[RMDB]
Structure probing data (DMS) for a 177-nucleotide construct. The RNA was probed in 150 mM KOAc, 10 mM MgCl2 and 150 mM bicine (pH 8.5) at 24 C. For DMS, 1,803 sequencing reads were counted.
RNA sequence: GGGAACGACUCGAGUAGAGUCGAAAAGAUAUGGAUUUCAGACGUAUUCGUAUACGUAUGGAGCUGUCCAUCGGAAACGAUGGCAGCGUUGAAAUACCGUAUACGAAUACGUCUGAAAUCCUAAGUCCCUUAUUGCAGUGUUCGCACUGCAAUAAGGAAAAGAAACAACAACAACAAC
Reactivity to DMS in 0.01 (KOAc 150mM, MgCl2 10mM, bicine 150mM(pH8.5), 24C), signal-to-noise 1, nucleotides 027 to 126: g000a100u000a260u000g010g020a040u000u000u010c010a000g000a030c000g010u000a010u010u000c000g010u000a010u000a010c000g000u010a010u000g010g010a090g010c000u000g000u030c010c000a000u010c010g010g020a150a130a260c000g030a010u000g020g010c000a010g010c000g000u000u020g000a140a080a020u000a010c180c100g040u000a000u000a010c000g010a070a000u000a000c010g000u000c000u000g000a000a000a000u000c020c000u000a010a110g000u000c040